[RMDB]
RNA sequence: GGGAACGACUCGAGUAGAGUCGAAAAUCUUUGGAUGCGAGAAUGUGUUUGGGGACAAUUGGAGCAAAUUGACUCCCUUACGGUUAGUAUGAAGGUUUGAAAGUGAAAGAUUUUUGGUACGUUUCUAGGGAUGCAUGAUAUUCGUAUCAUGCAUCCCAAAAGAAACAACAACAACAAC
Reactivity to 2A3 in 0.01 (KOAc 150mM, MgCl2 10mM, bicine 150mM(pH8.5), 24C), signal-to-noise 2, nucleotides 027 to 126: u000c000u000u000u000g140g030a010u000g000c000g070a020g000a000a210u030g020u030g000u080u000u110g070g000g000g020a000c030a000a160u000u050g060g040a230g000c040a070a000a030u010u000g000a030c010u020c000c000c000u000u030a000c020g140g010u050u010a070g000u000a060u100g000a070a000g250g250u080u050u070g260a290a090a190g030u000g100a060a100a010g080a160u140u210u060u060u000g040g040u140a150c050g000u000u000u000c000u000a000